Chemical mapping of a 177-nucleotide RNA with DMS and 2A3. For DMS, 21,806 sequencing reads were counted. Conditions: 150 mM KOAc, 10 mM MgCl2 and 150 mM bicine (pH 8.5), 24 C.

[RMDB]
RNA sequence: GGGAACGACUCGAGUAGAGUCGAAAAGCACAGAAAGAUCCGAAGCAGGAAUACAAACGUGAAUCGUUCUCCAUGUUUGCAGCGAUGCUGGAGUCGUUGAAAUAUGAAGUUAUCAGUACGCUGAGCAUGUUAGAAAUCAAUUCGUUGAUUUCUAACAAAAAGAAACAACAACAACAAC
Reactivity to DMS in 0.01 (KOAc 150mM, MgCl2 10mM, bicine 150mM(pH8.5), 24C), signal-to-noise 9, nucleotides 027 to 126: g020c040a070c070a080g010a070a090a110g000a080u000c040c040g010a100a100g010c070a070g010g010a100a080u010a090c090a030a070a080c110g020u000g010a050a080u000c020g010u000u000c000u000c010c050a050u000g000u000u000u010g020c020a020g010c010g000a090u000g010c030u000g010g010a060g010u000c010g020u000u000g000a070a090a090u000a040u000g000a060a050g010u010u000a090u000c010a020g020u000a040c070g010c020u000g000a080g010c110a090
Reactivity to 2A3 in 0.01 (KOAc 150mM, MgCl2 10mM, bicine 150mM(pH8.5), 24C), signal-to-noise 8, nucleotides 027 to 126: g010c010a020c010a050g100a050a130a010g060a060u000c030c030g030a060a020g050c060a030g050g070a070a030u150a090c040a040a140a010c050g050u060g040a040a080u050c010g010u010u010c010u000c010c010a020u050g040u030u070u110g030c010a000g000c020g090a090u040g010c010u030g040g020a040g030u000c010g010u020u080g090a070a070a010u210a040u060g030a040a020g080u080u070a140u120c000a000g010u010a010c040g000c020u000g000a020g030c020a020